[RMDB]
RNA sequence: GGGAACGACUCGAGUAGAGUCGAAAAGAUAUGGAGAAUUCGCGAAGAACUAUGUAACAAGUGGUCGGAAACGACCACCGCCCAUAGGGAGCGAACUCCUAAGUCAAAAGCAUGGUUCGCCAUGCAACUACUAAUCGUUGUUCGCAACGAUUAGUAGAAAAGAAACAACAACAACAAC
Reactivity to 2A3 in 0.01 (KOAc 150mM, MgCl2 10mM, bicine 150mM(pH8.5), 24C), signal-to-noise 6, nucleotides 027 to 126: g030a020u060a040u130g010g000a040g030a180a300u060u020c030g000c020g150a300a080g020a050a020c010u010a010u070g070u210a140a070c080a220a110g000u000g020g000u000c000g000g040a090a070a040c010g000a000c000c010a000c000c010g010c010c010c000a000u020a010g010g000g010a030g000c000g000a010a010c000u000c000c000u020a150a020g040u030c030a000a060a070a060g010c010a000u010g000g040u090u170c250g030c090c000a000u000g000c000a010a000
Reactivity to DMS in 0.01 (KOAc 150mM, MgCl2 10mM, bicine 150mM(pH8.5), 24C), signal-to-noise 6, nucleotides 027 to 126: g010a030u000a300u000g010g000a020g010a100a180u000u000c000g020c010g010a100a110g020a120a160c000u000a010u000g000u000a040a080c160a140a060g010u000g010g010u000c000g000g000a060a080a150c000g010a020c010c000a000c000c010g000c300c150c000a020u000a010g000g010g000a120g000c000g000a000a030c010u000c000c000u010a050a150g010u000c030a050a050a090a120g010c010a000u000g010g000u000u010c230g030c000c000a010u000g000c010a060a070